The data come from the RNA Mapping Database (RMDB), library OK3TST. Structure probing data (2A3) for a 207-nucleotide construct. Values cover nucleotides 27 to 156.
RNA sequence: GGGAACGACUCGAGUAGAGUCGAAAAGGUGGGGUGUGGUUGUGGACUGUGCAAUAGUGAGAGGCUGAACUUUGAAAAAUGACUUUGCCAUUUUUACAUUUCAUCUCUUUAAGCCUCUGUUUAUUCAUGUAUAAAAGAAAGUACUACACAUAGUUGACCUAAUGGCAUCAUUCGUGAUGCCAUUAGGAAAAGAAACAACAACAACAAC
Reactivity to 2A3 in 0.01 (KOAc 150mM, MgCl2 10mM, bicine 150mM(pH8.5), 24C), signal-to-noise 1, nucleotides 027 to 156: g000g000u020g030g000g020g060u050g000u020g000g080u080u000g060u060g030g000a060c030u030g000u010g050c060a030a060u060a070g140u130g080a030g000a000g000g000c000u010g010a010a010c000u050u060u090g050a060a000a000a000a000u050g000a040c120u090u050u130g050c040c000a050u130u000u000u000u000a080c000a030u000u000u280c000a170u030c090u020c000u200u100u030a070a050g000c000c000u020c030u070g020u000u220u090a090u040u140c020a010u140g000u070a140u120a010a040a000a050g030a010a180a000g120u100a030c050u120a000c030a000c080a110u240a170g000u000u000g020a010